[RMDB]
RNA sequence: GGGAACGACUCGAGUAGAGUCGAAAAGGGGUCCCUAGUACAACAUGGCAGGUGGAGCUUUGAUCUAUACUGAAGCCUCCACGGUAUAGGGAGCUCCAUAUUGGCCAUGUAAUCUAGGGACGGAGGCACCCAAAAACGGAUCCUUCGGGAUCCGUAAACCAUAGGUGAUCUUCGGAUCACCUAUGGUAAAAGAAACAACAACAACAAC
Reactivity to 2A3 in 0.01 (KOAc 150mM, MgCl2 10mM, bicine 150mM(pH8.5), 24C), signal-to-noise 1, nucleotides 027 to 156: g040g000g100g010u000c000c000c000u000a010g010u040a040c260a300a010c000a220u000g000g000c000a000g010g030u010g020g040a000g000c010u300u130u000g000a000u020c000u000a000u000a000c000u030g080a090a040g040c030c000u020c010c020a010c010g000g020u000a010u000a000g020g010g010a000g000c000u000c000c000a000u010a060u000u070g120g000c000c000a000u000g000u030a010a070u070c000u000a000g030g000g000a000c000g010g000a000g010g000c000a050c000c000c000a120a040a030a000a000c010g010g000a000u000c010c010u030u170c270g060g000g000a000u000c000c000g020u040a060a010